[RMDB]
Record summary: This 207-nucleotide RNA was probed chemically with DMS and 2A3. The 2A3 profile rests on 1,622 reads. For DMS the reverse transcriptase was MarathonRT. For 2A3 the reverse transcriptase was SuperScript II with manganese. The reactions ran in a buffer of 150 mM KOAc, 10 mM MgCl2 and 150 mM bicine (pH 8.5), at 24 C.

RNA sequence: GGGAACGACUCGAGUAGAGUCGAAAAACCAAGUCUGGGGGCCGAUGAGGGUUGGCUCAAAGUAGGGUUUUUACUUGAAAACUCAAGCUGUGACCCCAAAACGAUGGAGGUAAAUGAGAAUCCUCCUAAAACUAUGGACACUUCGGUGUCCAUAGAACGUACUAACGAUCUUCGGAUCGUUAGUACGAAAAGAAACAACAACAACAAC
Reactivity to DMS in 0.01 (KOAc 150mM, MgCl2 10mM, bicine 150mM(pH8.5), 24C), signal-to-noise 1, nucleotides 027 to 156: a100c040c010a140a160g000u000c050u020g000g030g020g050g030c040c040g050a110u000g000a190g010g000g000u000u000g000g000c040u000c080a060a010a090g010u030a200g020g040g000u000u000u000u040u000a130c110u000u000g010a080a070a110a060c050u000c010a030a140g020c040u000g030u000g000a180c010c020c040c020a020a080a130a060c050g000a170u000g000g040a050g060g050u000a050a070a200u000g000a130g020a140a140u000c010c000u000c020c010u000a010a020a100a120c000u000a010u000g010g000a060c000a020c000u000u020c300g090g000u000g010u010c010c000a010u000a010g010a040a190
Reactivity to 2A3 in 0.01 (KOAc 150mM, MgCl2 10mM, bicine 150mM(pH8.5), 24C), signal-to-noise 3, nucleotides 027 to 156: a000c010c000a050a010g120u040c050u040g010g000g000g000g060c000c030g040a030u070g020a150g080g150g010u090u060g020g000c010u000c040a080a080a010g070u110a080g000g040g000u010u060u040u060u010a120c060u060u130g030a040a010a080a050c030u030c020a010a030g010c060u070g040u090g150a090c020c000c010c040a020a060a030a060c040g000a060u120g000g020a000g010g010u060a130a140a130u220g040a070g040a070a110u060c000c000u000c010c000u030a000a050a000a000c000u000a000u020g000g000a000c000a000c010u010u080c260g060g000u000g000u010c000c000a000u000a000g000a000a000